[RMDB]
RNA sequence: GGGAACGACUCGAGUAGAGUCGAAAAGAUAUGGAGAAUAGUGAUGACCUUAACCGUGUCGGAAACGACACACUAAGCAAGCUACUCCUAAGUCAAAGAUUUCGUAUAGUUCGCUAUACGAAAUCAAGUACCAAACCUUGUUCGCAAGGUUUGGUACAAAAGAAACAACAACAACAAC
Reactivity to DMS in 0.01 (KOAc 150mM, MgCl2 10mM, bicine 150mM(pH8.5), 24C), signal-to-noise 3, nucleotides 027 to 126: g000a040u000a300u000g020g010a030g000a090a150u010a020g020u000g000a120u010g020a110c300c030u010u000a000a110c140c160g020u000g000u000c000g010g010a130a060a190c000g000a020c010a000c010a040c050u000a000a000g010c060a080a270g020c010u000a010c000u000c000c000u000a060a170g000u000c030a090a100a130g010a000u000u000u010c000g020u000a000u010a010g000u010u000c200g010c010u000a000u000a000c000g010a000a000a000u000c010a020a090
Reactivity to 2A3 in 0.01 (KOAc 150mM, MgCl2 10mM, bicine 150mM(pH8.5), 24C), signal-to-noise 3, nucleotides 027 to 126: g040a020u070a040u100g030g020a030g020a300a300u050a070g050u040g150a300u190g070a140c020c000u010u010a060a040c080c160g010u010g000u000c000g000g020a050a020a040c010g010a000c010a000c020a010c060u010a010a000g010c030a080a100g000c000u020a010c010u000c000c000u020a160a040g070u040c040a100a050a130g020a000u030u000u000c020g000u000a010u010a020g040u010u050c300g000c160u000a010u000a000c000g000a010a000a000u010c000a000a000